[RMDB]
RNA sequence: GGGAACGACUCGAGUAGAGUCGAAAAGCAAUCUUGCAAAAGGAGAGAAGGCUAAUGUGCUAAUUGGACAAGGAGACGUAGUGUUGGUAAUGAAACGGAAACGGGACUCUAGCAUACUUACUGACAGGAAACCGACCUGAUUCGUCAGGUCGGUUUCAAAAGAAACAACAACAACAAC
Reactivity to DMS in 0.01 (KOAc 150mM, MgCl2 10mM, bicine 150mM(pH8.5), 24C), signal-to-noise 1, nucleotides 027 to 126: g010c060a060a100u010c040u010u010g000c080a120a090a090a050g000g010a170g000a070g000a050a050g020g000c010u010a020a140u000g020u000g020c020u020a030a140u000u000g010g010a080c070a080a020g000g000a080g010a050c070g050u010a100g010u010g010u000u010g000g010u000a050a100u030g030a070a130a060c040g020g030a050a030a070c160g090g000g000a110c050u010c000u020a070g010c050a040u000a020c110u000u010a120c030u010g010a060c140a060g000